Record summary: Source: RMDB library OK2TRN, as collected in RNAgym. Chemical mapping of a 177-nucleotide RNA with DMS.
[RMDB]
RNA sequence: GGGAACGACUCGAGUAGAGUCGAAAAAUCUAGGUCUGUGCAUUUCAUCUCAGUGCCUCAAUACUGAUAGUAAGGUUUAAGUUUAAGAGAGGAAAGGUGCCAUUUUUGCCAAAGCUUGGGCUUUGACUAUGACCGACAGUUUCGACUGUCGGUCAUAAAAAGAAACAACAACAACAAC
Reactivity to DMS in 0.01 (KOAc 150mM, MgCl2 10mM, bicine 150mM(pH8.5), 24C), signal-to-noise 1, nucleotides 027 to 126: a100u010c070u000a200g010g020u020c030u000g020u010g000c030a050u000u010u000c030a050u010c020u010c070a140g020u010g010c050c000u000c150a060a130u000a070c030u010g010a170u020a190g020u020a100a130g020g020u000u000u020a080a070g000u000u010u010a060a100g000a030g000a090g000g000a020a030a030g010g010u030g020c090c100a100u000u000u000u000u010g030c030c000a000a060a030g000c040u020u010g000g030g000c020u000u000u010g020a020c030
For DMS the reverse transcriptase was MarathonRT.
The DMS profile rests on 767 reads.